[RMDB]
RNA sequence: GGGAACGACUCGAGUAGAGUCGAAAAGGAACCAUGCAGUACCAGACACAAGAUAGAUCUUCCAAAGAACAAGGCUUUUUUCGAAUAAGCCAAUUCAUUUGGGACCCCACGGAUCCACUCUUUUUCCGAGUAUGAUACUGUUCGCAGUAUCAUACUCAAAAGAAACAACAACAACAAC
Reactivity to 2A3 in 0.01 (KOAc 150mM, MgCl2 10mM, bicine 150mM(pH8.5), 24C), signal-to-noise 3, nucleotides 027 to 126: g060g000a010a010c010c010a050u120g000c030a010g020u060a080c030c000a030g080a080c030a020c030a100a010g030a060u130a030g080a030u010c030u070u000c010c010a020a020a020g010a040a010c060a170a110g020g030c000u010u030u000u000u200u290c110g070a100a070u080a120a020g000c000c000a000a040u040u030c030a100u040u020u010g020g020g020a040c000c000c010c010a010c020g040g010a030u010c000c000a050c040u080c030u040u130u010u070u030c060c040
Reactivity to DMS in 0.01 (KOAc 150mM, MgCl2 10mM, bicine 150mM(pH8.5), 24C), signal-to-noise 4, nucleotides 027 to 126: g010g010a130a140c040c040a060u010g010c050a070g010u000a070c050c000a060g020a100c120a060c110a060a050g000a090u000a080g000a070u000c070u010u000c020c020a010a020a040g000a020a030c100a090a150g000g010c000u000u000u000u020u020u010c200g010a080a050u010a020a000g010c000c000a090a160u000u000c020a090u000u000u000g010g010g000a080c060c010c000c030a060c140g010g010a040u000c020c030a070c190u000c010u010u010u000u000u010c110c090
An RNA of 177 nucleotides, treated with 2A3 and DMS and read out base by base. For 2A3, 3,770 sequencing reads were counted. For DMS, 3,398 sequencing reads were counted.